[RMDB]
Notes:
Chemical mapping of a 207-nucleotide RNA with 2A3. Reactivities are given for positions 27 through 156. It was measured as part of the RMDB library M2RFPK. The RNA was probed in 150 mM KOAc, 10 mM MgCl2 and 150 mM bicine (pH 8.5) at 24 C.
RNA sequence: GGGAACGACUCGAGUAGAGUCGAAAACCCAGUUCCGGGGCCGUUCACUGGGUCCGAAGCCUCUAGAAGGAUAAUAUAGGCACUCCAUACCCUACUCCGACUCAAUACGUCCCCGUCGUACAGAAUGCAAGGGCAUCCCUGUUCGCAGGGAUGCCAAGAUCUGAAUACACUUCGGUGUAUUCAGAUCAAAAGAAACAACAACAACAAC
Reactivity to 2A3 in 0.01 (KOAc 150mM, MgCl2 10mM, bicine 150mM(pH8.5), 24C), signal-to-noise 1, nucleotides 027 to 156: c030c000c000a010g070u120u070c030c010g000g000g000g000c030c010g030u090u110c020a040c090u010g000g000g000u000c030c000g010a010a010g030c000c000u080c080u150a160g050a170a070g150g020a100u150a260a150u180a130u050a040g010g010c030a030c090u130c030c000a090u110a230c050c030c010u020a030c010u000c030c020g000a000c000u000c010a000a070u040a020c000g000u010c020c000c030c000g010u030c000g000u020a020c020a080g120a240a110u170g070c120a070a040g050g040g000c010a000u010c000c000c020u040g010u040u070c200g000c070a010g000g000g020a000u000g000c000c000a000a000